[RMDB]
RNA sequence: GGGAACGACUCGAGUAGAGUCGAAAAGCGGCUGCCGGGCUCGCCCGCACCACGGUCGGUUUCAGUGUGGCCGCGGCUGCCUGCUCGCCGGGCGAGAUUGCCUGGUUCGUGGUUGCCGCCGGCAUCGGUCAAGGUGUAGAUUCGUCUACACCUUGACAAAAGAAACAACAACAACAAC
Reactivity to DMS in 0.01 (KOAc 150mM, MgCl2 10mM, bicine 150mM(pH8.5), 24C), signal-to-noise 2, nucleotides 027 to 126: g010c040g010g000c060u000g020c040c050g030g010g000c050u010c110g010c040c010c010g030c120a060c050c060a070c040g010g020u000c070g010g010u020u010u010c040a100g010u000g030u000g010g010c030c030g000c010g010g010c040u000g000c000c010u000g030c090u010c140g020c020c000g000g000g010c000g000a120g010a180u010u020g020c000c010u000g000g000u010u010c100g020u010g010g000u000u000g000c020c010g040c060c040g010g010c040a070u000c070g010
Reactivity to 2A3 in 0.01 (KOAc 150mM, MgCl2 10mM, bicine 150mM(pH8.5), 24C), signal-to-noise 2, nucleotides 027 to 126: g040c000g020g010c040u040g020c070c030g000g020g030c050u040c030g050c030c000c030g040c020a050c010c030a030c010g060g020u060c070g080g010u040u060u090c050a110g030u020g030u190g270g050c010c000g030c020g000g000c010u010g000c000c020u050g040c000u050c020g040c010c000g020g000g010c080g030a230g070a230u210u300g000c000c010u010g000g000u010u030c030g020u080g020g000u010u030g000c030c020g000c070c060g020g000c020a020u160c030g020